[RMDB]
RNA sequence: GGGAACGACUCGAGUAGAGUCGAAAAAUAAAUAGUGCGUGGACGCACCCACGCAUUCAUGCGUAGGCAGUUGUUCGCAUUAGUACAGCUUAGCCUGUACUAAGCGAACAACAAGUACUACAAAAAAGAUGUUUAUGAGUUUCGACUCAUAAACAUCAAAAGAAACAACAACAACAAC
Reactivity to DMS in 0.01 (KOAc 150mM, MgCl2 10mM, bicine 150mM(pH8.5), 24C), signal-to-noise 5, nucleotides 027 to 126: a090u010a050a080a080u010a050g020u000g000c000g030u000g000g010a110c180g020c270a130c180c000c000a010c020g010c000a010u000u000c150a070u000g010c230g010u000a000g010g000c030a140g000u000u000g010u000u000c000g010c010a090u000u000a000g000u000a000c000a000g000c010u000u000a100g020c160c010u000g010u000a000c000u000a000a010g000c000g000a010a000c000a010a000c000a040a060g020u000a060c010u000a000c010a000a070a070a060a110a080
Reactivity to 2A3 in 0.01 (KOAc 150mM, MgCl2 10mM, bicine 150mM(pH8.5), 24C), signal-to-noise 4, nucleotides 027 to 126: a000u190a010a080a050u170a020g010u000g010c010g000u010g010g020a070c120g020c140a070c000c010c000a000c000g010c000a000u020u020c010a030u080g090c040g010u010a010g010g000c050a040g010u000u000g000u010u000c010g000c130a230u030u000a000g000u000a010c000a000g000c010u150u120a040g020c030c000u000g000u000a000c000u000a000a000g000c000g000a000a000c000a000a010c000a000a000g000u020a160c000u000a010c000a000a110a000a010a020a020
The data come from the RNA Mapping Database (RMDB), library M2PK90.
An RNA of 177 nucleotides, treated with DMS and 2A3 and read out base by base.
For DMS, 6,836 sequencing reads were counted.
Reactivities are given for positions 27 through 126.
DMS adducts were read by reverse transcription with MarathonRT.
The RNA was probed in 150 mM KOAc, 10 mM MgCl2 and 150 mM bicine (pH 8.5) at 24 C.